[RMDB]
RNA sequence: GGGAACGACUCGAGUAGAGUCGAAAAGGGGUCCUGAGUUCAGCGCUAAAGCUUUUGACGCUCUGAAGCCUCCACGGAGCGAUAAGCUUUAGAACUACGCUGACUCAGGACGGAGGCACCCAAAACGCCUGUGCAAGCUUCGGCUUGCACAGGCGAACGUGAUACCUAGUUUCGACUAGGUAUCACGAAAAGAAACAACAACAACAAC
Reactivity to 2A3 in 0.01 (KOAc 150mM, MgCl2 10mM, bicine 150mM(pH8.5), 24C), signal-to-noise 1, nucleotides 027 to 156: g040g000g030g000u010c010c000u000g000a000g030u240u200c010a000g020c000g000c040u010a000a020a000g000c040u070u100u240u300g180a190c100g020c020u010c000u010g040a050a040g020c010c000u000c010c000a020c000g000g000a020g000c010g020a030u070a190a080g000c000u010u000u020a000g000a030a000c100u230a070c040g000c020u000g000a010c000u000c000a000g030g000a000c000g010g000a000g000g000c000a010c000c010c000a010a070a040a060c000g000c000c000u010g010u000g040c020a000a000g000c000u040u300c300g080g070c010u100u030g000c000a000c040a000g010g000c010g000a020a000
Annotation
Structure probing data (2A3) for a 207-nucleotide construct. The data come from the RNA Mapping Database (RMDB), library RNAMAK. The reactions ran in a buffer of 150 mM KOAc, 10 mM MgCl2 and 150 mM bicine (pH 8.5), at 24 C.